[RMDB]
RNA sequence: GGGAACGACUCGAGUAGAGUCGAAAACAGAAAAUGGAUUACAAUGUGAUUCUUAUUCAGCACCAUUUAAUAAUGCCACAAAAAAUGAAUAUAAAACAUAUUUUGGAUUAUGUGGUGAGUUACAAAGUAUUACAGCAGAAACAUUACCACAAUUAGACGUACGGAAAAUGUUCGCAUUUUCCGUACGAAAAGAAACAACAACAACAAC
Reactivity to 2A3 in 0.01 (KOAc 150mM, MgCl2 10mM, bicine 150mM(pH8.5), 24C), signal-to-noise 3, nucleotides 027 to 156: c040a010g160a060a110a020a040u120g000g020a080u130u060a060c050a090a090u050g000u020g020a010u050u000c000u040u090a100u120u110c040a020g050c000a020c010c010a000u070u060u030a030a020u030a040a020u110g170c010c020a030c040a010a080a010a010a010a070u030g000a080a020u130a030u110a270a070a050a040c020a020u070a140u040u070u010u030g010g020a000u000u000a020u030g010u010g000g000u020g020a020g020u000u020a050c050a080a050a000g000u000a040u060u120a040c040a030g090c030a000g120a090a080a020c010a020u040u080a030c040c080a030c030a110a040u230u080a080g090a050
Reactivity to DMS in 0.01 (KOAc 150mM, MgCl2 10mM, bicine 150mM(pH8.5), 24C), signal-to-noise 1, nucleotides 027 to 156: c080a170g000a050a070a060a040u010g030g000a170u000u000a120c000a150a160u000g070u000g040a050u000u000c040u000u010a090u040u030c060a100g000c010a050c030c030a040u000u000u000a060a130u000a000a150u030g010c040c060a230c040a000a000a150a040a200a070u000g010a030a130u000a250u000a140a120a090a170c040a020u000a040u010u010u010u000g010g000a050u000u000a040u000g020u000g000g010u000g000a130g110u000u000a080c040a100a130a080g070u000a040u000u000a020c080a130g000c080a080g000a230a000a070c030a060u000u010a040c060c000a050c040a080a190u000u010a080g040a270